This 177-nucleotide RNA was probed chemically with 2A3 and DMS. For DMS the reverse transcriptase was MarathonRT.
RNA sequence: GGGAACGACUCGAGUAGAGUCGAAAAUAAGGGUAAAGCGGCUGGCAUGUCGUCCGGGCAUAAAGUCAUAUCGCCUGAACAGAGAACAUGUUACUGACUUUGAAACGCGAUUUUAUAAUUUGCUGUCGCUUCCCAAAUGUUUCGACAUUUGGGAAGCAAAAGAAACAACAACAACAAC
Reactivity to 2A3 in 0.01 (KOAc 150mM, MgCl2 10mM, bicine 150mM(pH8.5), 24C), signal-to-noise 2, nucleotides 027 to 126: u110a010a040g130g030g100u020a030a040a000g050c000g100g020c060u130g020g000c000a000u030g000u050c000g020u000c020c000g020g000g000c020a010u140a030a220a000g170u220c000a070u050a020u080c130g000c000c050u010g040a050a000c000a120g190a000g000a040a000c000a000u050g020u070u010a040c040u000g140a050c020u020u050u150g180a190a190a020c030g000c020g000a030u000u020u060u000a260u060a180a160u030u040u120g030c080u050g020u060c060
Reactivity to DMS in 0.01 (KOAc 150mM, MgCl2 10mM, bicine 150mM(pH8.5), 24C), signal-to-noise 1, nucleotides 027 to 126: u010a160a060g020g010g000u040a030a040a070g000c000g010g040c170u000g000g000c000a040u000g000u040c010g000u010c000c000g000g010g000c000a030u010a010a100a120g010u100c110a110u000a020u000c280g010c000c050u000g010a090a070c040a100g010a130g000a140a150c000a010u000g000u000u000a210c170u000g000a140c020u010u000u010g000a090a050a060c120g000c010g000a010u000u000u030u010a050u000a050a030u000u010u010g050c120u000g000u000c080